[RMDB]
RNA sequence: GGGAACGACUCGAGUAGAGUCGAAAACGGAAUGCAAUUGAUUGCUAUUGGAGUGGGUAUCGGCGUCAGUUCAUGGUGACUUAUGAUGAUUUGGGUGCAAUUGAAUGUGAGCCUAAUGAAGAGCAGGAGUUGAUCAAGCUUGUUUCCACAGAUCCUGCCUGAUUGAGCUAUUCGUAGCUCAAUCAGGAAAAGAAACAACAACAACAAC
Reactivity to 2A3 in 0.01 (KOAc 150mM, MgCl2 10mM, bicine 150mM(pH8.5), 24C), signal-to-noise 3, nucleotides 027 to 156: c050g070g010a140a030u070g030c040a010a080u110u140g090a070u040u050g020c050u100a070u100u100g040g030a060g020u040g000g050g020u070a080u100c080g050g010c030g030u060c040a050g020u090u040c060a050u130g030g000u070g050a030c000u060u060a040u150g040a000u050g030a070u030u010u040g040g000g000u040g040c020a050a090u030u060g050a080a040u130g050u040g040a000g000c010c000u080a100a050u130g030a010a070g010a000g010c020a010g020g060a010g020u030u060g060a090u070c080a090a010g000c030u060u050g040u000u050u010c010c000a050c000a060g030a030u040c000c000u010g010
Reactivity to DMS in 0.01 (KOAc 150mM, MgCl2 10mM, bicine 150mM(pH8.5), 24C), signal-to-noise 1, nucleotides 027 to 156: c080g020g020a070a080u000g000c080a080a130u010u030g000a090u000u000g010c030u000a120u000u010g000g010a130g030u010g000g000g010u000a090u000c080g010g030c100g060u000c050a080g000u000u000c040a060u050g010g030u010g020a080c010u000u000a060u000g010a080u010g020a110u000u000u010g000g040g000u000g010c000a030a080u000u010g040a100a060u000g030u010g010a070g000c000c040u000a070a120u000g020a040a080g000a160g000c030a040g000g020a120g010u000u010g020a130u000c040a000a100g000c020u000u000g020u020u000u000c000c050a130c110a100g010a160u010c090c030u000g000